[RMDB]
RNA sequence: GGGAACGACUCGAGUAGAGUCGAAAAGGCGUAAAUGAUGCGCCACUAGCGAAAGAGAAAAGCCAAAGGGCGUAGUCAUAGGGUAUGACGGAUGAGAAGUCCAAUCUUCAUGUUGGCUUGCUACCAUGGUGGUGAGAGUAUUCGUACUCUCACCACCAAAAGAAACAACAACAACAAC
Reactivity to DMS in 0.01 (KOAc 150mM, MgCl2 10mM, bicine 150mM(pH8.5), 24C), signal-to-noise 2, nucleotides 027 to 126: g020g010c000g000u000a090a180a100u000g030a100u020g030c000g030c000c020a000c060u000a070g000c100g000a130a060a080g040a120g010a030a080a050a120g000c000c000a040a020a100g000g000g040c000g000u020a010g010u010c010a020u000a270g000g000g000u000a020u000g000a130c050g000g020a030u000g000a170g040a080a060g010u000c000c100a080a130u000c090u020u000c130a100u020g000u000u050g000g010c030u000u000g000c100u040a170c080c060a200u000
Reactivity to 2A3 in 0.01 (KOAc 150mM, MgCl2 10mM, bicine 150mM(pH8.5), 24C), signal-to-noise 2, nucleotides 027 to 126: g020g000c060g040u100a000a120a160u050g060a020u080g010c000g000c010c000a010c000u010a010g000c000g010a020a090a130g200a030g010a030a090a060a000g010c000c000a230a030a090g030g000g000c000g000u020a000g100u050c000a020u040a000g150g000g040u230a100u100g060a010c180g000g020a030u060g020a040g010a070a000g020u010c080c000a000a030u000c020u070u050c040a090u250g030u030u010g000g020c010u020u010g030c020u040a040c060c000a060u040